[RMDB]
RNA sequence: GGGAACGACUCGAGUAGAGUCGAAAAAUAAACCGGAAGCGACGCAGCAAGCCCGACCGGAAGGGCAACCGGAACCCGGAUCUCAACCCGCUUGGGACGCACCUGAGAGACGGGAAUGCGUAAAAAACCAUUAUCUUAUGUUCGCAUAAGAUAAUGGAAAAGAAACAACAACAACAAC
Reactivity to DMS in 0.01 (KOAc 150mM, MgCl2 10mM, bicine 150mM(pH8.5), 24C), signal-to-noise 5, nucleotides 027 to 126: a070u000a010a030a050c000c000g000g000a220a110g030c200g000a020c020g020c010a090g010c100a160a170g000c000c000c000g010a210c020c020g000g010a090a070g000g010g010c010a080a100c000c000g000g000a170a280c010c010c000g000g000a080u000c000u000c010a040a100c020c010c010g000c220u000u000g000g000g010a100c120g000c120a070c220c130u010g000a030g000a030g010a100c010g020g000g000a040a010u000g010c000g000u000a000a040a090a060a050a090
Reactivity to 2A3 in 0.01 (KOAc 150mM, MgCl2 10mM, bicine 150mM(pH8.5), 24C), signal-to-noise 3, nucleotides 027 to 126: a000u130a000a040a010c020c010g010g020a120a050g240c060g090a010c000g020c020a030g000c030a090a050g000c020c000c000g040a060c020c030g060g030a050a050g050g000g000c010a010a020c000c000g020g000a020a030c010c000c000g030g020a040u020c010u000c010a060a130c010c000c040g160c280u220u280g020g000g020a050c060g040c060a080c020c020u010g010a010g000a000g000a020c000g000g000g000a000a030u020g000c000g000u020a060a050a000a010a010a010

The record gives the reactivity of an RNA of 177 nucleotides to DMS and 2A3.
For 2A3 the reverse transcriptase was SuperScript II with manganese.
DMS adducts were read by reverse transcription with MarathonRT.
The RNA was probed in 150 mM KOAc, 10 mM MgCl2 and 150 mM bicine (pH 8.5) at 24 C.